Description: The record gives the reactivity of an RNA of 177 nucleotides to 2A3 and DMS. 2A3 adducts were read by reverse transcription with SuperScript II with manganese. DMS adducts were read by reverse transcription with MarathonRT. The 2A3 profile rests on 1,982 reads. The reactions ran in a buffer of 150 mM KOAc, 10 mM MgCl2 and 150 mM bicine (pH 8.5), at 24 C. The data come from the RNA Mapping Database (RMDB), library OK2TRN.
[RMDB]
RNA sequence: GGGAACGACUCGAGUAGAGUCGAAAAUGAUUAGGACUCACAUCAAGGACAGAGAGUUGAGGUCUGAGUUGAUGGAUUAUCUAAAUCGAGCAGAAACAGAUGAAGAGGUUCAGGAGGUGGCCAAUACAUAACGAGAGAUGUUCGCAUCUCUCGUUAUAAAAGAAACAACAACAACAAC
Reactivity to 2A3 in 0.01 (KOAc 150mM, MgCl2 10mM, bicine 150mM(pH8.5), 24C), signal-to-noise 2, nucleotides 027 to 126: u110g010a050u080u050a040g020g030a000c010u010c010a110c010a070u050c030a040a090g070g020a050c030a020g060a010g000a010g100u120u210g100a050g060g080u020c010u020g010a040g120u040u040g020a030u040g000g050a040u050u070a090u080c050u080a010a100a060u060c010g030a000g020c030a020g130a120a090a010c050a030g030a050u070g020a060a010g060a020g070g000u090u110c020a060g080g030a000g000g040u030g030g000c020c000a040a010u070a040c070
Reactivity to DMS in 0.01 (KOAc 150mM, MgCl2 10mM, bicine 150mM(pH8.5), 24C), signal-to-noise 4, nucleotides 027 to 126: u010g010a070u000u010a110g010g000a070c110u000c040a130c030a040u000c040a040a100g000g020a120c080a050g010a060g000a110g000u000u010g010a130g020g010u010c030u000g000a160g000u000u000g010a080u000g010g010a080u000u000a080u010c040u010a050a050a050u000c030g020a100g010c090a050g000a060a080a110c090a080g000a070u000g000a080a060g020a060g010g010u000u010c060a050g000g000a050g020g010u000g010g000c040c050a050a050u010a060c200